[RMDB]
RNA sequence: GGGAACGACUCGAGUAGAGUCGAAAACUAACAGAAAACGCCAGUGCUCCUGGCUGAGAAAGAAGGAGGAAGAGGAGGAGGAGAAACCAAGUUCUGUGGUCCGGCACCAGCUGGUCACCCCUGGGGGAGUGACCAACCCAUUCGUGGGUUGGUCACUAAAAGAAACAACAACAACAAC
Reactivity to DMS in 0.01 (KOAc 150mM, MgCl2 10mM, bicine 150mM(pH8.5), 24C), signal-to-noise 1, nucleotides 027 to 126: c030u010a090a150c160a190g000a060a030a080a140c120g000c020c010a010g020u010g000c210u000c060c010u000g010g000c020u020g000a070g000a050a060a060g010a020a060g000g000a040g000g000a070a070g000a110g000g000a060g000g000a070g020g020a030g000a050a110a110c080c050a060a170g010u000u010c130u000g050u000g000g000u000c030c010g000g010c000a140c150c200a090g010c010u000g000g010u000c030a050c040c000c000c020u000g020g010g000g000g010
Overview
Chemical mapping of a 177-nucleotide RNA with DMS. DMS (dimethyl sulfate) methylates the pairing face of unpaired adenines and cytosines. The DMS profile rests on 990 reads.